[RMDB]
RNA sequence: GGGAACGACUCGAGUAGAGUCGAAAAAUGAUUUGAAAAUCUUUCAACCCCUAACACCCAUAUGUAGCAGUAUUAAAAAUUUCUUUGAGGGUAGGGAUUUAAAAAAAUGUGUAUACGCUUGUAAGUAAACUUAUCCUAUCUUCGGAUAGGAUAAGUUAAAAGAAACAACAACAACAAC
Reactivity to DMS in 0.01 (KOAc 150mM, MgCl2 10mM, bicine 150mM(pH8.5), 24C), signal-to-noise 2, nucleotides 027 to 126: a070u020g010a010u010u010u010g030a130a070a170a130u010c030u000u000u000c040a140a150c070c020c000c030u020a090a070c140a110c020c010c030a120u000a060u000g030u000a050g040c020a070g010u020a080u000u000a050a070a080a070a080u000u010u010c040u010u000u000g010a090g020g020g010u000a030g010g010g000a060u000u010u000a010a020a020a090a080a040a010u000g010u010g000u000a100u000a040c010g010c060u000u000g020u010a050a050g000u000a060